[RMDB]
RNA sequence: GGGAACGACUCGAGUAGAGUCGAAAAGAUAUGGACGAACAACAGCUCGAGAUUAGUGGUCGGAAACGACCAUGGGAUCUUAGACAAGACAUGUUCGUCCUAAGUCAAACUCGUGUUCGCACGAGAAGCAGAAAGAAGUGUUCGCACUUCUUUCUGCAAAAGAAACAACAACAACAAC
Reactivity to DMS in 0.01 (KOAc 150mM, MgCl2 10mM, bicine 150mM(pH8.5), 24C), signal-to-noise 2, nucleotides 027 to 126: g000a030u000a300u010g000g020a020c000g020a000a020c020a010a130c130a180g000c100u000c040g010a010g010a020u000u000a300g000u000g000g010u000c010g000g010a120a080a240c010g000a020c000c000a000u000g010g030g000a000u000c010u000u010a100g000a050c070a060a130g000a180c190a060u000g000u000u000c020g020u000c000c000u000a030a030g000u000c010a040a050a200c000u000c000g020u020g010u000u000c150g040c010a010c000g000a010g000a060a020
Reactivity to 2A3 in 0.01 (KOAc 150mM, MgCl2 10mM, bicine 150mM(pH8.5), 24C), signal-to-noise 2, nucleotides 027 to 126: g050a020u040a020u150g010g010a000c010g000a020a000c010a000a030c040a050g050c110u030c090g090a050g000a030u000u000a020g030u010g000g000u010c020g040g010a070a040a050c020g010a020c000c040a000u000g020g300g010a000u000c000u000u050a120g030a050c070a120a130g040a050c080a120u040g000u010u020c020g010u000c010c000u000a010a010g010u000c010a080a000a130c010u000c030g020u010g050u070u090c300g000c070a000c000g010a000g030a040a010

This 177-nucleotide RNA was probed chemically with DMS and 2A3. Values cover nucleotides 27 to 126. Source: RMDB library TTRDEL, as collected in RNAgym. The DMS profile rests on 1,112 reads.